[RMDB]
The data come from the RNA Mapping Database (RMDB), library RFMREP. Structure probing data (2A3 and DMS) for a 177-nucleotide construct. For DMS the reverse transcriptase was MarathonRT. The reactions ran in a buffer of 150 mM KOAc, 10 mM MgCl2 and 150 mM bicine (pH 8.5), at 24 C. Reactivities are given for positions 27 through 126. The DMS profile rests on 20,254 reads.

RNA sequence: GGGAACGACUCGAGUAGAGUCGAAAAACAUACCAUACUACCCUUUUUAAAACUAUCCUAUAUGUUUGAUGCUAGCAUAGCGUAAUUUUGUGUUCUCAUGGUGCAGCAGGGUUAGUUUAUUGUGUACCAAAGGUAACUAGUUCGCUAGUUACCUUUGAAAAGAAACAACAACAACAAC
Reactivity to 2A3 in 0.01 (KOAc 150mM, MgCl2 10mM, bicine 150mM(pH8.5), 24C), signal-to-noise 3, nucleotides 027 to 126: a000c020a010u150a040c030c000a030u050a070c020u050a040c000c010c000u030u050u030u110u290a070a070a010a010c020u020a020u070c010c020u090a070u020a050u300g100u070u090u080g090a030u040g000c020u030a060g030c020a060u020a030g040c040g100u090a080a130u070u180u110u140g130u020g030u030u030c020u000c020a050u110g050g000u040g030c020a010g020c010a010g010g020g000u010u050a020g000u000u040u040a130u090u090g050u010g040u030a030c010
Reactivity to DMS in 0.01 (KOAc 150mM, MgCl2 10mM, bicine 150mM(pH8.5), 24C), signal-to-noise 9, nucleotides 027 to 126: a070c090a090u010a080c080c050a090u000a050c050u000a070c010c000c010u000u000u010u010u010a040a050a050a040c040u000a070u010c110c060u000a080u010a060u010g010u000u000u000g010a120u000g010c030u000a080g020c040a030u000a060g020c100g010u020a040a060u000u010u010u000g020u010g010u000u000c030u000c040a090u000g010g010u000g010c020a030g010c050a050g000g000g000u010u000a020g000u000u000u000a070u010u000g010u010g020u000a110c180